[RMDB]
An RNA of 177 nucleotides, treated with DMS and 2A3 and read out base by base. The reactions ran in a buffer of 150 mM KOAc, 10 mM MgCl2 and 150 mM bicine (pH 8.5), at 24 C. It was measured as part of the RMDB library OK2TST.
RNA sequence: GGGAACGACUCGAGUAGAGUCGAAAAUAUGGUCGAACACUUCGGCGCUGACCUUGCCGCCCUUCGACCAGGGCGAGAUGGCGAUCAGCGGGACGCGGUGGCCGAGCCCGAUGGGCAGCCCGCUGGAAUCCCUACGUAAUUUCGAUUACGUAGGGAUAAAAGAAACAACAACAACAAC
Reactivity to DMS in 0.01 (KOAc 150mM, MgCl2 10mM, bicine 150mM(pH8.5), 24C), signal-to-noise 9, nucleotides 027 to 126: u000a070u010g010g010u000c010g010a080a160c170a100c130u010u000c040g000g010c030g010c050u000g000a050c050c050u010u010g020c060c000g020c090c030c040u010u000c040g010a070c090c060a050g000g010g010c020g020a100g000a120u010g010g010c050g000a080u000c020a020g010c010g020g010g010a100c080g010c070g010g010u000g010g010c020c030g000a120g000c020c010c020g010a100u020g010g010g010c020a160g000c020c000c010g010c040u010g000g000a290
Reactivity to 2A3 in 0.01 (KOAc 150mM, MgCl2 10mM, bicine 150mM(pH8.5), 24C), signal-to-noise 6, nucleotides 027 to 126: u120a050u050g020g000u010c030g030a200a010c090a030c180u100u100c060g130g000c020g000c040u040g020a070c010c000u020u120g060c010c010g020c010c000c000u090u100c040g050a040c020c020a000g010g010g000c040g010a110g040a100u240g040g010c040g050a120u030c020a000g000c010g010g010g000a040c040g000c020g060g020u070g080g030c010c010g010a030g020c010c000c020g120a250u210g020g010g000c010a030g030c010c000c000g010c010u010g010g010a060